Chemical mapping of a 177-nucleotide RNA with DMS and 2A3.
Source: RMDB library M2PK50, as collected in RNAgym.
For 2A3, 1,567 sequencing reads were counted.
RNA sequence: GGGAACGACUCGAGUAGAGUCGAAAAGACCGUUAGUUCGCUAACGGUCAAAUAAAAUCAGCGGUAACGAGGCGUAAUAUAUUACCGCUGAACGCCUCGUUAAAAACAGGAGCUUCGGCUCCUGUAACAAUUCGGAUGUGUUCGCACAUCCGAAUUGAAAAGAAACAACAACAACAAC
Reactivity to DMS in 0.01 (KOAc 150mM, MgCl2 10mM, bicine 150mM(pH8.5), 24C), signal-to-noise 1, nucleotides 027 to 126: g010a010c000c000g010u000u000a000g020u020u020c180g040c000u000a000a020c000g020g010u010c000a000a030a050u000a070a050a050a100u000c100a040g010c050g000g020u000a000a020c030g000a060g000g010c030g020u010a030a140u000a070u000a090u010u020a040c010c020g040c070u000g000a030a040c050g000c020c000u000c050g020u010u010a020a100a050a100a030c010a000g010g000a010g030c010u000u020c130g070g000c000u000c000c010u000g020u000a040a090
Reactivity to 2A3 in 0.01 (KOAc 150mM, MgCl2 10mM, bicine 150mM(pH8.5), 24C), signal-to-noise 1, nucleotides 027 to 126: g000a010c000c020g010u000u000a010g010u040u020c200g000c210u000a000a010c000g010g030u000c000a000a000a000u030a000a000a000a130u110c030a000g080c010g160g000u040a000a010c020g000a010g020g000c010g070u040a140a050u120a030u020a060u160u200a080c000c010g000c010u010g010a000a000c000g030c000c020u000c000g010u030u040a000a080a000a000a020c000a000g000g000a000g050c000u020u100c170g100g010c000u000c000c000u010g000u010a000a000